[RMDB]
RNA sequence: GGGAACGACUCGAGUAGAGUCGAAAACGAGAUGAGUUCGCUCAUCUCGAAAGAACCGCGGGCGUGACUCGGUCAGAGCAUGACAGGCGGUGCGGUCACGAAAAAGUGGUGUGUUCGCACACCACAAGAUUAAAGCUUCGUUCGCGAAGCUUUAAUCAAAAGAAACAACAACAACAAC
Reactivity to DMS in 0.01 (KOAc 150mM, MgCl2 10mM, bicine 150mM(pH8.5), 24C), signal-to-noise 3, nucleotides 027 to 126: c000g010a020g010a000u000g000a010g020u000u020c270g010c000u010c000a000u000c000u000c000g010a020a080a180g000a130a070c010c000g030c030g000g000g010c000g000u000g000a140c010u000c020g010g020u010c280a090g000a060g000c030a020u010g000a070c040a070g000g020c020g010g000u010g010c070g000g020u010c070a080c110g000a070a080a040a110a090g000u000g000g010u000g020u000g000u000u000c190g010c000a000c000a000c000c000a000c010a030a050
Reactivity to 2A3 in 0.01 (KOAc 150mM, MgCl2 10mM, bicine 150mM(pH8.5), 24C), signal-to-noise 1, nucleotides 027 to 126: c000g000a000g000a000u000g000a000g020u050u140c190g100c000u000c020a010u000c000u000c010g010a020a030a010g030a050a040c030c010g000c050g040g080g020c040g050u040g100a300c040u040c110g060g090u160c160a040g000a010g050c080a050u040g060a090c020a050g060g120c000g000g000u020g020c030g040g050u100c060a070c200g110a110a040a010a030a000g000u000g010g000u000g010u010g010u010u040c180g000c070a000c010a000c000c040a000c010a000a000

This 177-nucleotide RNA was probed chemically with DMS and 2A3.
Conditions: 150 mM KOAc, 10 mM MgCl2 and 150 mM bicine (pH 8.5), 24 C.
For DMS, 3,283 sequencing reads were counted.